[RMDB]
RNA sequence: GGGAACGACUCGAGUAGAGUCGAAAAGGUAUCUAAUCUGCAUGUGUAAAUAACCAGCUCUAAGGAGGAUGUGAUAUACCACCCAGGGUGGGGACUGCUGGGUAUGGCAGUGGUUCUUACCCUGAAGCAUGCACUGGAGUCACUUGGAGGCUUAUUAAUCAGGAGUGAUAUUCGUAUCACUCCUGAUAAAAGAAACAACAACAACAAC
Reactivity to DMS in 0.01 (KOAc 150mM, MgCl2 10mM, bicine 150mM(pH8.5), 24C), signal-to-noise 2, nucleotides 027 to 156: g010g030u000a040u000c050u000a070a080u000c030u000g040c000a050u000g000u000g020u010a080a040a090u010a110a120c030c040a090g000c010u020c060u000a090a090g010g000a130g020g000a070u000g020u010g010a120u000a130u000a080c000c010a160c060c020c000a040g010g020g040u020g000g010g040g000a020c010u000g020c020u020g000g020g020u020a060u000g010g000c000a030g020u000g030g010u000u000c040u000u000a050c020c000c030u010g020a030a080g000c020a040u000g000c000a030c030u020g020g020a140g000u010c020a050c050u000u000g030g030a160g010g020c000u010u010a080u000u000a130
Reactivity to 2A3 in 0.01 (KOAc 150mM, MgCl2 10mM, bicine 150mM(pH8.5), 24C), signal-to-noise 2, nucleotides 027 to 156: g040g000u060a040u140c110u090a100a040u040c020u070g020c000a070u060g040u000g020u200a030a060a240u090a140a080c020c000a030g030c010u040c030u130a100a130g070g020a020g010g010a040u030g010u010g110a010u040a020u040a180c030c000a020c010c000c000a000g000g000g000u010g000g010g000g000a010c000u010g020c010u000g020g080g120u130a080u120g180g010c010a000g000u000g000g000u010u000c000u000u010a000c000c050c000u010g000a000a000g000c020a010u060g000c010a010c010u040g010g030a030g050u070c010a020c120u000u040g040g000a020g050g050c030u060u090a060u090u190a280

The record gives the reactivity of an RNA of 207 nucleotides to DMS and 2A3. Reactivities are rounded to 0.1 and cut off at 0 and 3. Values cover nucleotides 27 to 156.